RNA sequence: GGGAACGACUCGAGUAGAGUCGAAAAGAAAGAAAGAAAGAAAUCUCACAGAAUGACGGAUUCGAUCGUUGUGGUCGGCGGGCCACCACGUCAUUCCUUCGCACUGUCUCCGGGCAGACCGCCAUAAAAAAGCGGAUCUACUUCGGUAGAUCCGCAACUGCAUAUAGGCGUUCGCGCCUAUAUGCAGAAAAGAAACAACAACAACAAC
Reactivity to 2A3 in 0.01 (KOAc 150mM, MgCl2 10mM, bicine 150mM(pH8.5), 24C), signal-to-noise 1, nucleotides 027 to 156: g070a000a120a040g040a000a090a020g070a030a100a020g040a040a130a010u010c030u100c010a020c010a070g100a120a120u140g010a020c020g010g040a070u250u120c140g090a080u120c070g100u090u100g010u000g010g000u040c060g000g010c030g020g010g000c010c000a000c060c000a020c000g010u000c000a010u060u080c010c010u130u210c070g050c040a030c070u010g000u010c000u000c060c070g000g000g030c020a020g010a070c010c000g010c000c010a090u290a040a080a000a050a000a010g010c020g000g000a000u000c000u000a000c000u090u020c010g000g000u000a000g000a000u030c000c000g000c000a000a000
Chemical mapping of a 207-nucleotide RNA with 2A3. 2A3 adducts were read by reverse transcription with SuperScript II with manganese. The data come from the RNA Mapping Database (RMDB), library M2RFPK.